[RMDB]
Record summary
The record gives the reactivity of an RNA of 177 nucleotides to DMS and 2A3. The reactions ran in a buffer of 150 mM KOAc, 10 mM MgCl2 and 150 mM bicine (pH 8.5), at 24 C. For 2A3 the reverse transcriptase was SuperScript II with manganese.

RNA sequence: GGGAACGACUCGAGUAGAGUCGAAAACAUGACUCUUAAUGGUCUUUGGCUUGACAACACAGUCUGGUGCCCACGACACGUAAUGUGCCCGGCUGACCAGUUGUCUGAUCCUAAUUAUGAUGCCUUGGACUAAUACUACGUUCGCGUAGUAUUAGUCAAAAGAAACAACAACAACAAC
Reactivity to DMS in 0.01 (KOAc 150mM, MgCl2 10mM, bicine 150mM(pH8.5), 24C), signal-to-noise 4, nucleotides 027 to 126: c130a070u010g010a020c020u010c110u000u010a090a110u010g000g010u000c020u000u000u010g010g020c110u000u000g000a020c010a030a020c020a100c050a030g010u010c010u010g030g010u000g020c010c120c100a070c130g010a100c150a080c200g010u010a120a080u010g000u000g010c000c000c040g000g000c020u000g000a060c070c030a030g020u000u000g000u000c000u000g010a090u000c000c030u000a050a080u010u000a100u000g000a080u000g010c040c020u000u010g010
Reactivity to 2A3 in 0.01 (KOAc 150mM, MgCl2 10mM, bicine 150mM(pH8.5), 24C), signal-to-noise 6, nucleotides 027 to 126: c030a060u120g020a010c010u030c030u200u230a160a090u290g000g000u000c000u080u040u040g020g000c030u030u080g010a010c000a010a000c000a000c000a020g000u000c040u100g000g030u100g020c010c050c010a030c020g130a050c040a010c080g070u100a090a070u100g000u020g000c000c010c000g020g000c010u000g010a050c000c030a020g000u000u000g000u000c010u010g020a030u020c010c020u030a100a090u140u150a140u150g190a080u110g020c020c000u010u070g050

Description: Source: RMDB library 15KREP, as collected in RNAgym.